[RMDB]
RNA sequence: GGGAACGACUCGAGUAGAGUCGAAAAAGGGUUAGGAUUGCAAAGACUUGGAUACAUUCUAGAAGAAAUGAAUCGGGCACCAGGAGGAAAGAUGUACGCAGAUGACACUGCUGGCUGGGACACCCGCCAAUAUAUUCGUCUUCGGACGAAUAUAUUGAAAAGAAACAACAACAACAAC
Reactivity to DMS in 0.01 (KOAc 150mM, MgCl2 10mM, bicine 150mM(pH8.5), 24C), signal-to-noise 9, nucleotides 027 to 126: a080g000g010g010u000u010a070g010g010a080u010u000g010c070a070a110a090g000a070c060u000u010g010g020a080u000a080c060a040u000u000c030u000a130g010a120a110g000a060a050a060u010g010a070a050u010c040g020g000g010c080a070c050c060a060g000g010a100g000g010a050a060a060g010a080u000g020u010a070c150g010c030a030g000a090u010g000a090c170a070c030u000g020c020u000g000g010c030u000g010g000g000a090c160a090c020c010c020g020c170
Reactivity to 2A3 in 0.01 (KOAc 150mM, MgCl2 10mM, bicine 150mM(pH8.5), 24C), signal-to-noise 3, nucleotides 027 to 126: a000g040g000g020u050u050a020g010g050a090u040u120g050c030a060a060a070g020a140c040u090u090g060g010a030u050a110c010a050u060u040c030u080a140g050a240a020g040a030a210a060u090g030a030a060u050c020g000g030g000c030a020c030c020a020g030g000a020g010g040a090a070a030g030a030u090g030u050a030c070g000c020a010g030a090u060g010a030c020a010c100u020g000c010u010g040g030c020u000g010g030g020a020c010a030c020c010c020g050c040
About this RNA: Conditions: 150 mM KOAc, 10 mM MgCl2 and 150 mM bicine (pH 8.5), 24 C. The record gives the reactivity of an RNA of 177 nucleotides to DMS and 2A3. The 2A3 profile rests on 5,397 reads. The DMS profile rests on 13,966 reads.